[RMDB]
RNA sequence: GGGAACGACUCGAGUAGAGUCGAAAAUGCACAAUCCAGUCUCUCCCACAUGAAAGCGAAGUCCCCGUGGAGCUUUACUGCAGCCUGUAGCUGUGACGCGAUUUUUAAUGCGUAGGGUAGGAAGGAGGUGAUGAUCGUACUUCGGUACGAUCAUCACAAAAGAAACAACAACAACAAC
Reactivity to DMS in 0.01 (KOAc 150mM, MgCl2 10mM, bicine 150mM(pH8.5), 24C), signal-to-noise 2, nucleotides 027 to 126: u030g010c030a080c110a090a080u020c090c070a110g020u020c020u000c030u010c020c020c000a130c200a060u050g020a070a040a060g050c020g000a130a110g000u030c000c000c020c080g000u010g000g000a210g040c020u030u000u000a070c120u000g030c050a090g010c050c040u010g020u010a180g020c020u010g000u020g000a030c030g050c020g000a030u060u000u090u100u000a060a110u000g030c010g020u000a080g000g000g020u020a050g010g040a150a030g000g000a070g000
Reactivity to 2A3 in 0.01 (KOAc 150mM, MgCl2 10mM, bicine 150mM(pH8.5), 24C), signal-to-noise 2, nucleotides 027 to 126: u140g020c040a040c020a030a100u050c050c000a030g080u040c010u020c000u010c000c030c000a020c020a010u190g090a160a000a000g010c010g020a020a000g050u080c000c000c020c000g060u100g000g040a040g010c000u070u000u130a090c020u080g010c010a000g030c030c070u150g010u130a040g030c000u020g020u020g010a000c000g000c000g030a010u120u010u010u020u300a180a010u240g000c020g000u010a050g010g000g020u020a050g010g000a120a010g020g000a060g040
Chemical mapping of a 177-nucleotide RNA with DMS and 2A3. For 2A3 the reverse transcriptase was SuperScript II with manganese. Conditions: 150 mM KOAc, 10 mM MgCl2 and 150 mM bicine (pH 8.5), 24 C. Reactivities are given for positions 27 through 126. It was measured as part of the RMDB libraries RFM100 and RFMREP.